[RMDB]
RNA sequence: GGGAACGACUCGAGUAGAGUCGAAAAUGACGUCGUUUCGACGACGUCAACAUAAAUUCAGCGGUAAAUAAUUAGGAGGCGUUACCGCUGAACGCCUCCAUACGAGAGGGCUAUUCGUAGCCCUCAAACCUCUGACUAGUUUCGACUAGUCAGAGGUAAAAGAAACAACAACAACAAC
Reactivity to DMS in 0.01 (KOAc 150mM, MgCl2 10mM, bicine 150mM(pH8.5), 24C), signal-to-noise 2, nucleotides 027 to 126: u000g000a000c000g010u000c000g000u000u000u010c090g010a010c010g010a010c000g000u000c010a030a110c180a090u000a080a050a100u010u000c000a010g000c000g000g000u010a010a020a080u000a020a030u000u020a120g000g010a020g010g000c000g010u010u010a030c060c010g000c010u010g000a000a020c010g000c020c000u000c010c010a130u030a060c250g020a160g000a010g010g000g000c000u000a020u000u000c140g000u000a020g000c000c000c000u000c000a010a030
Reactivity to 2A3 in 0.01 (KOAc 150mM, MgCl2 10mM, bicine 150mM(pH8.5), 24C), signal-to-noise 2, nucleotides 027 to 126: u060g000a000c010g000u000c000g000u000u050u100c170g060a010c000g010a000c010g000u000c000a000a000c000a030u170a050a090a060u120u050c010a000g000c010g160g090u150a050a040a110u100a120a150u180u210a170g030g000a000g000g010c000g000u000u000a140c010c000g000c000u010g010a000a000c000g010c000c010u010c000c010a020u130a070c220g020a140g000a010g130g000g020c000u020a040u010u080c140g120u050a000g020c000c000c000u000c000a000a000